[RMDB]
RNA sequence: GGGAACGACUCGAGUAGAGUCGAAAAGAUAUGGAAGUGAAGGAGCGAUAAGCUCCUUGUCGGAAACGACAAUGAGCUUUUGACGCUCCCACUUCCUAAGUCAAAGGUGCCGGUUCGCCGGCACCAAUCAUUCUUACAUCUUCGGAUGUAAGAAUGAAAAAGAAACAACAACAACAAC
Reactivity to 2A3 in 0.01 (KOAc 150mM, MgCl2 10mM, bicine 150mM(pH8.5), 24C), signal-to-noise 4, nucleotides 027 to 126: g000a000u020a020u090g000g010a000a010g000u030g090a300a130g030g020a010g000c030g080a160u070a300a020g000c000u010c000c020u010u000g010u000c000g010g000a020a030a030c000g000a000c000a000a000u000g010a000g020c000u140u250u240u300g260a150c040g000c010u000c000c000c000a000c000u000u000c000c000u000a000a000g020u010c020a070a070a220g040g000u000g010c000c020g000g110u050u100c300g050c120c000g000g000c000a000c000c000a010a010
Reactivity to DMS in 0.01 (KOAc 150mM, MgCl2 10mM, bicine 150mM(pH8.5), 24C), signal-to-noise 4, nucleotides 027 to 126: g000a030u000a200u010g000g010a030a010g010u000g010a230a190g010g000a010g030c000g040a220u000a030a020g000c000u000c000c100u000u000g000u010c000g010g000a050a020a080c000g010a000c000a000a010u010g010a010g010c000u000u010u010u000g020a220c050g000c000u000c000c020c000a000c000u000u000c000c000u000a010a070g000u000c020a130a170a150g010g020u000g010c000c000g010g000u000u010c240g030c000c000g010g000c000a000c010c000a020a030
Source: RMDB library TTRDES, as collected in RNAgym. An RNA of 177 nucleotides, treated with 2A3 and DMS and read out base by base. Values are in units of 0.01, from 0 to 300, in steps of 10. Conditions: 150 mM KOAc, 10 mM MgCl2 and 150 mM bicine (pH 8.5), 24 C. DMS adducts were read by reverse transcription with MarathonRT. Reactivities are given for positions 27 through 126. The 2A3 profile rests on 11,098 reads.